[RMDB]
RNA sequence: GGGAACGACUCGAGUAGAGUCGAAAAUUCAGUUCGCUGAAGGUUAAGCGUACUACUUGGUGCUUUGUACGCGAUAAGAUACCUCCCAAAUAGGAGGUAUCUUUUGACGCGUGAGAAGAACUACACCAAGUAUCGCACACGUGCCGUUCGCGGCAAAAUACUAUCUAACAUUCGUGUUAGAUAGUAUAAAAGAAACAACAACAACAAC
Reactivity to DMS in 0.01 (KOAc 150mM, MgCl2 10mM, bicine 150mM(pH8.5), 24C), signal-to-noise 7, nucleotides 027 to 156: u000u000c040a100g030u000u000c050g040c020u010g000a050a090g010g020u000u000a050a080g020c000g040u000a030c040u010a020c010u000u000g000g020u000g000c000u000u000u010g020u000a020c010g030c000g020a150u000a020a020g010a030u000a010c000c000u000c000c000c020a040a180a210u010a040g010g010a030g020g020u000a000u000c000u000u000u000u000g010a160c050g020c000g030u000g000a130g010a100a110g010a100a150c030u010a110c000a040c010c020a020a030g010u000a000u000c090g030c020a070c030a020c030g010u010g020c000c000g010u000u010c220g030c020g020g020c050a030a030a100
Reactivity to 2A3 in 0.01 (KOAc 150mM, MgCl2 10mM, bicine 150mM(pH8.5), 24C), signal-to-noise 9, nucleotides 027 to 156: u070u040c030a010g080u060u130c100g020c080u100g030a040a020g090g040u110u220a140a070g020c030g020u080a130c050u010a000c000u040u010g010g000u010g020c010u000u030u050g120u160a000c000g020c000g020a060u020a050a000g000a000u000a000c000c000u070c010c040c030a210a300a100u300a080g000g010a000g000g000u000a000u000c000u010u000u010u030g060a030c010g000c000g000u020g040a080g010a030a010g010a050a020c110u150a050c220a000c010c010a000a000g000u010a010u120c010g010c000a030c010a010c130g130u090g030c010c030g080u080u080c170g000c010g040g000c000a040a050a010